RNA sequence: GGGAACGACUCGAGUAGAGUCGAAAAGAUAUGGAGUGUAAACGGAGGUACACCAAUCUCGGAAACGAGGAGUGUACUACCCACCCGUUUCCACUCCUAAGUCGAAGCCGACAGUUCGCUGUCGGAAGAUACGCUAAGGGUUCGCCCUUAGCGUAUCAAAAGAAACAACAACAACAAC
Reactivity to DMS in 0.01 (KOAc 150mM, MgCl2 10mM, bicine 150mM(pH8.5), 24C), signal-to-noise 3, nucleotides 027 to 126: g010a050u000a300u000g000g010a010g020u010g010u010a020a010a020c010g000g010a120g020g010u000a010c010a000c010c040a080a160u010c000u000c010g000g000a050a050a080c000g010a020g010g010a130g010u000g000u000a020c040u010a080c060c060c100a300c230c010c000g000u000u000u000c070c000a000c020u000c000c000u000a010a080g000u000c010g010a130a120g000c000c000g000a010c000a010g010u000u010c210g010c000u000g000u000c010g000g000a050a030
Reactivity to 2A3 in 0.01 (KOAc 150mM, MgCl2 10mM, bicine 150mM(pH8.5), 24C), signal-to-noise 3, nucleotides 027 to 126: g010a000u020a020u100g000g000a000g010u010g000u010a000a010a000c010g030g020a140g230g110u020a000c020a010c010c030a110a180u150c000u000c010g010g000a060a040a030c010g010a010g030g030a230g020u000g000u010a020c010u030a040c030c020c010a080c000c010c000g000u030u000u000c020c000a000c000u020c000c000u020a050a010g010u000c010g040a060a000g060c010c000g000a000c000a000g030u120u170c260g030c180u000g000u000c000g000g010a000a020